[RMDB]
RNA sequence: GGGAACGACUCGAGUAGAGUCGAAAAGAUAUGGAGGCAUCAGAGGAACUACGUCGAGUGUUCGGAAACGAACACGAGACGCCGACGAAGAUGCCUCCUAAGUCAAACGAGGACUUCGGUCCUCGAAGUUCUAAAGUAACUUCGGUUACUUUAGAACAAAAGAAACAACAACAACAAC
Reactivity to 2A3 in 0.01 (KOAc 150mM, MgCl2 10mM, bicine 150mM(pH8.5), 24C), signal-to-noise 3, nucleotides 027 to 126: g020a010u050a030u150g000g000a000g000g000c010a010u010c010a010g050a080g090g050a100a160c180u260a100c300g020u010c010g000a030g030u000g010u010u000c010g000g030a050a050a030c010g000a000a010c010a010c010g000a000g000a000c000g060c020c070g160a110c030g020a000a030g000a010u000g000c000c010u000c000c000u000a000a010g000u010c010a020a000a020c010g000a000g010g000a000c010u050u110c300g140g000u010c000c010u000c010g000a010a000
Reactivity to DMS in 0.01 (KOAc 150mM, MgCl2 10mM, bicine 150mM(pH8.5), 24C), signal-to-noise 4, nucleotides 027 to 126: g000a030u000a300u000g010g010a020g020g020c000a000u000c000a030g000a300g000g000a160a050c060u000a120c010g000u000c000g000a300g000u000g020u000u000c010g000g000a080a090a180c000g010a020a010c000a020c000g000a300g010a010c010g030c120c200g000a080c050g000a210a200g000a000u000g000c010c000u000c000c000u000a000a040g010u000c030a070a090a190c010g010a010g010g000a010c000u000u010c160g020g000u000c000c010u000c020g010a040a080
Conditions: 150 mM KOAc, 10 mM MgCl2 and 150 mM bicine (pH 8.5), 24 C.
This 177-nucleotide RNA was probed chemically with 2A3 and DMS.
DMS adducts were read by reverse transcription with MarathonRT.
It was measured as part of the RMDB library TTRDEL.
The DMS profile rests on 3,220 reads.